An RNA of 177 nucleotides, treated with DMS and 2A3 and read out base by base. Values cover nucleotides 27 to 126. The RNA was probed in 150 mM KOAc, 10 mM MgCl2 and 150 mM bicine (pH 8.5) at 24 C. For 2A3 the reverse transcriptase was SuperScript II with manganese. It was measured as part of the RMDB library OK2TST.

RNA sequence: GGGAACGACUCGAGUAGAGUCGAAAACAAGUGUAGGUCAAGGAGAGAAACAUGAGUACAAGGUAGCUUCAGGUUGGGUGGAUUAGAUUACCCAGAAGAACAGUGAAUCUCCUUUGAGAGAACUGUGCGUGAAUUUAGCUUUCGAGCUAAAUUCACGAAAAGAAACAACAACAACAAC
Reactivity to DMS in 0.01 (KOAc 150mM, MgCl2 10mM, bicine 150mM(pH8.5), 24C), signal-to-noise 2, nucleotides 027 to 126: c080a050a090g000u000g010u000a070g030g000u010c070a060a080g000g010a060g010a070g000a120a150a070c060a030u010g000a140g010u000a100c150a030a130g000g010u000a100g000c050u000u000c080a030g020g020u000u010g000g000g020u020g010g000a090u010u010a080g000a300u000u010a070c030c000c000a080g010a080a070g010a090a010c050a080g010u000g010a130a190u000c000u010c000c210u000u010u010g010a060g020a050g000a080a020c010u000g040u000g010
Reactivity to 2A3 in 0.01 (KOAc 150mM, MgCl2 10mM, bicine 150mM(pH8.5), 24C), signal-to-noise 1, nucleotides 027 to 126: c060a050a060g070u030g000u160a000g010g120u010c010a030a000g000g000a040g010a000g000a030a110a020c010a040u090g020a020g050u040a030c050a110a010g090g000u030a030g140c000u090u060c030a030g110g030u140u090g010g030g010u030g020g010a070u070u090a030g010a040u010u090a030c020c010c020a010g000a030a000g030a040a020c050a040g000u000g070a070a070u030c000u000c020c140u040u120u120g100a080g010a010g020a090a050c020u020g000u050g090